[RMDB]
RNA sequence: GGGAACGACUCGAGUAGAGUCGAAAAGACCGCAGAAGCGGAAACGGCGAAAACGUUCGGAAGAAUACGCACGAGCGGAAGUCUGGAUAGCGACCGAGAGGUCGCAACGCCGAAUCAUCCAGAAGAACCCAUGGACUCCAUUCGUGGAGUCCAUGGGAAAAGAAACAACAACAACAAC
Reactivity to 2A3 in 0.01 (KOAc 150mM, MgCl2 10mM, bicine 150mM(pH8.5), 24C), signal-to-noise 1, nucleotides 027 to 126: g010a000c010c000g000c030a160g170a300a010g040c000g020g000a070a010a000c000g020g000c000g010a160a000a000a000c010g000u010u030c000g060g020a070a020g110a170a130u180a100c070g010c070a000c070g020a000g000c000g040g060a000a060g050u000c000u000g000g000a000u020a020g000c000g000a000c030c000g070a090g000a000g130g000u000c000g000c010a000a000c000g000c000c000g040a050a020u110c020a020u000c010c010a010g010a000a000g010a020a040
Structure probing data (2A3) for a 177-nucleotide construct. Source: RMDB library OK1LIB, as collected in RNAgym. High 2A3 reactivity points to a flexible backbone, as in loops and unpaired stretches.